An RNA of 177 nucleotides, treated with 2A3 and DMS and read out base by base. Conditions: 150 mM KOAc, 10 mM MgCl2 and 150 mM bicine (pH 8.5), 24 C. For DMS, 6,089 sequencing reads were counted. For DMS the reverse transcriptase was MarathonRT.
RNA sequence: GGGAACGACUCGAGUAGAGUCGAAAAUGGGUCUCACGGUCCAUAAUGUGGCAGGCACAGCGUGAGGCUGGCUUCACAGAGCAGCGACAACUGCCCGCUUCCAACGGUGGAAGGAUAAUGGGCCGCUGUAACUUAAAUACUUCGGUAUUUAAGUUACAAAAGAAACAACAACAACAAC
Reactivity to 2A3 in 0.01 (KOAc 150mM, MgCl2 10mM, bicine 150mM(pH8.5), 24C), signal-to-noise 6, nucleotides 027 to 126: u070g070g020g050u020c020u010c030a020c020g000g000u000c010c000a010u050a040a080u150g040u190g010g000c040a040g050g020c090a030c030a250g050c030g040u080g060a050g130g000c010u010g030g040c000u130u090c080a060c010a090g040a010g020c020a010g000c010g090a050c050a110a020c020u010g000c000c000c010g030c010u010u000c000c040a150a120c150g240g160u150g020g010a000a000g020g020a020u110a170a020u060g010g000g000c000c000g000c020u020
Reactivity to DMS in 0.01 (KOAc 150mM, MgCl2 10mM, bicine 150mM(pH8.5), 24C), signal-to-noise 6, nucleotides 027 to 126: u010g010g000g010u000c010u000c050a280c030g010g000u010c010c010a020u000a060a090u010g020u010g000g010c140a040g000g010c080a150c100a060g010c010g010u010g010a130g010g020c020u000g010g020c060u000u010c070a090c110a080g020a060g000c000a090g010c030g010a120c210a110a200c010u000g000c000c000c010g000c020u000u000c010c010a060a180c300g010g010u010g010g000a020a020g000g000a100u010a090a020u000g010g010g000c010c020g020c150u000
2A3 adducts were read by reverse transcription with SuperScript II with manganese. The 2A3 profile rests on 12,420 reads.